[RMDB]
RNA sequence: GGGAACGACUCGAGUAGAGUCGAAAAGCCGUGCGGUACGUACCAGCGCCGUACAGGCCGCGCGGCGCGCGCGAUCAGUACAUGCGACUGCUCGGUACGAGGCGCGGAUCUAUGACUCGUACGUACGCCAGAUACACUCCUUCGGGAGUGUAUCUGGAAAAGAAACAACAACAACAAC
Reactivity to 2A3 in 0.01 (KOAc 150mM, MgCl2 10mM, bicine 150mM(pH8.5), 24C), signal-to-noise 2, nucleotides 027 to 126: g010c000c020g000u030g000c010g070g010u090a190c020g000u000a000c050c000a130g150c040g000c160c080g020u020a010c040a030g300g000c020c000g000c000g020c000g100g000c040g020c010g000c010g000c000g010a060u060c020a010g020u050a070c020a150u280g090c190g040a080c050u050g000c020u030c050g040g000u020a010c030g000a020g020g000c020g000c090g060g050a060u020c050u080a110u150g060a050c010u000c030g000u040a020c040g030u040a030c040g020
Reactivity to DMS in 0.01 (KOAc 150mM, MgCl2 10mM, bicine 150mM(pH8.5), 24C), signal-to-noise 2, nucleotides 027 to 126: g010c000c000g040u000g000c010g000g020u010a090c070g010u020a000c000c090a180g000c120g010c080c150g000u000a000c020a300g010g010c000c010g020c030g010c000g030g050c040g020c040g020c030g000c050g010a030u000c020a030g010u000a020c010a120u000g030c110g030a040c010u000g000c070u000c080g010g020u000a020c000g000a060g010g000c020g000c030g010g000a080u000c120u010a100u000g000a130c020u000c010g000u000a000c010g030u010a090c120g000